[RMDB]
RNA sequence: GGGAACGACUCGAGUAGAGUCGAAAAUCUUUUUUGCUUUAACAAUAAUCUCAUUAAAGCAUUCAAACGUACUCAUAUACGUAGAUAUUAACUGAGUAUCCUUAGGAAUAGUUUCAACAAACCUACACUUACAUCGUUACUUCGGUAACGAUGUAAGAAAAGAAACAACAACAACAAC
Reactivity to DMS in 0.01 (KOAc 150mM, MgCl2 10mM, bicine 150mM(pH8.5), 24C), signal-to-noise 2, nucleotides 027 to 126: u000c000u040u000u010u030u010u020g000c000u000u000u000a030a000c220a210a160u060a040a030u010c130u030c100a230u020u000a000a000a000g040c000a000u000u010c300a140a060a090c070g000u000a000c070u000c050a020u000a110u000a000c030g000u010a050g000a060u060a100u010u030a030a120c170u000g000a000g000u010a030u020c000c030u000u000a010g000g000a090a080u010a080g040u000u000u000c090a020a130c300a080a050a010c000c000u000a200c300a150
Reactivity to 2A3 in 0.01 (KOAc 150mM, MgCl2 10mM, bicine 150mM(pH8.5), 24C), signal-to-noise 8, nucleotides 027 to 126: u060c000u060u100u030u030u060u030g000c000u010u010u020a050a030c110a090a110u270a190a180u160c080u030c160a040u020u000a000a000a000g000c010a020u060u110c100a040a100a090c060g000u010a020c030u020c150a040u090a000u020a230c050g130u130a070g130a160u090a050u130u220a140a060c050u050g020a000g010u050a060u100c020c030u080u070a030g000g040a030a040u090a070g050u020u060u060c100a130a110c060a120a120a040c020c000u070a050c060a020